[RMDB]
The record gives the reactivity of an RNA of 177 nucleotides to 2A3 and DMS. DMS adducts were read by reverse transcription with MarathonRT.
RNA sequence: GGGAACGACUCGAGUAGAGUCGAAAAGAUAUGGAUUACUGGUAAUGAGCAACAGCUCGGAAACGAGACAUGCUCAACCAGGUAAUCCUAAGUCAAACACUAAACUAUGUUCGCAUAGUUUAGUGAAGAUGUAGCACGAGUUCGCUCGUGCUACAUCAAAAGAAACAACAACAACAAC
Reactivity to 2A3 in 0.01 (KOAc 150mM, MgCl2 10mM, bicine 150mM(pH8.5), 24C), signal-to-noise 2, nucleotides 027 to 126: g010a030u060a030u140g000g000a010u000u010a000c010u000g000g040u120a300a180u090g000a010g010c010a000a130c030a160g060c000u000c010g000g030a060a050a030c010g010a000g040a040c070a080u100g000c000u020c030a000a010c030c010a040g080g030u010a000a000u040c010c000u010a050a010g030u020c060a080a040a070c000a000c000u010a000a000a010c000u000a010u030g020u050u100c300g020c240a000u010a020g000u000u020u010a000g000u010g010a020a030
Reactivity to DMS in 0.01 (KOAc 150mM, MgCl2 10mM, bicine 150mM(pH8.5), 24C), signal-to-noise 2, nucleotides 027 to 126: g010a020u000a300u000g000g020a010u000u000a010c000u000g010g000u000a110a070u000g010a020g010c000a010a100c300a210g000c020u000c000g000g000a100a130a200c010g000a000g030a060c060a180u000g000c000u000c000a020a030c000c000a000g010g000u000a020a000u000c000c020u010a020a110g000u000c020a190a060a170c000a020c000u000a010a000a000c000u000a000u000g020u000u010c220g020c010a030u000a010g000u010u000u000a000g020u010g000a020a100